[RMDB]
RNA sequence: GGGAACGACUCGAGUAGAGUCGAAAAAUUUUGCUGGCAGCCAUGCGCAUUCCUCUAUUCUUACACAGGGAUUGGAAAGUCUGUACAGAGCUCAGCCAGUCGACCCGUUUUCAUUGGUGAAAGAGGACAUCUGCAACCUAUUCGUAGGUUGCAGAUGAAAAGAAACAACAACAACAAC
Reactivity to 2A3 in 0.01 (KOAc 150mM, MgCl2 10mM, bicine 150mM(pH8.5), 24C), signal-to-noise 2, nucleotides 027 to 126: a010u110u130u090u100g000c010u010g010g000c030a020g000c050c030a090u070g020c050g000c030a010u020u000c010c020u000c020u040a110u050u000c010u050u160a050c090a020c010a180g040g040g000a030u060u020g020g030a090a020a040g030u000c010u040g040u040a040c000a020g060a010g070c020u030c050a000g000c020c000a020g000u040c020g040a060c040c000c000g000u050u020u000u040c120a120u070u170g140g010u090g090a050a050a020g080a030g060g000a010
Reactivity to DMS in 0.01 (KOAc 150mM, MgCl2 10mM, bicine 150mM(pH8.5), 24C), signal-to-noise 2, nucleotides 027 to 126: a090u000u000u020u000g000c000u000g000g030c010a080g030c000c060a160u010g020c070g040c040a080u000u000c000c050u020c030u020a110u000u000c010u000u000a120c250a120c270a080g000g000g010a040u010u010g010g000a080a070a260g000u000c020u000g000u010a080c040a040g000a280g000c020u000c120a050g030c010c020a000g000u000c110g020a080c010c010c010g010u010u000u000u000c070a110u000u000g000g020u020g000a030a040a080g010a090g000g020a150